RNA sequence: GGGAACGACUCGAGUAGAGUCGAAAAGCCGUACGUAGCUAGCAUAUAUUACGAUCGGCCGGCGCUAUAAUAUGCCGUAAUUAGCGCCGCGGCAUCGCGGCCGGCAUUAGCAUCGAUCGCGUAAUGCCCGACAUUCUCUGUUCGCAGAGAAUGUCGGAAAAGAAACAACAACAACAAC
Reactivity to 2A3 in 0.01 (KOAc 150mM, MgCl2 10mM, bicine 150mM(pH8.5), 24C), signal-to-noise 1, nucleotides 027 to 126: g000c010c010g000u100a070c080g000u000a110g000c050u060a010g000c040a050u130a010u040a000u300u170a040c050g040a100u070c000g040g010c010c020g070g000c030g010c000u070a030u080a300a240u120a020u210g040c010c030g000u010a110a050u070u100a100g010c040g010c020c010g000c010g050g090c070a040u270c040g010c030g100g000c040c030g000g060c010a040u090u090a070g030c010a040u070c000g020a010u010c000g000c000g010u010a090a030u060g010c000
An RNA of 177 nucleotides, treated with 2A3 and read out base by base. Reactivities are given for positions 27 through 126.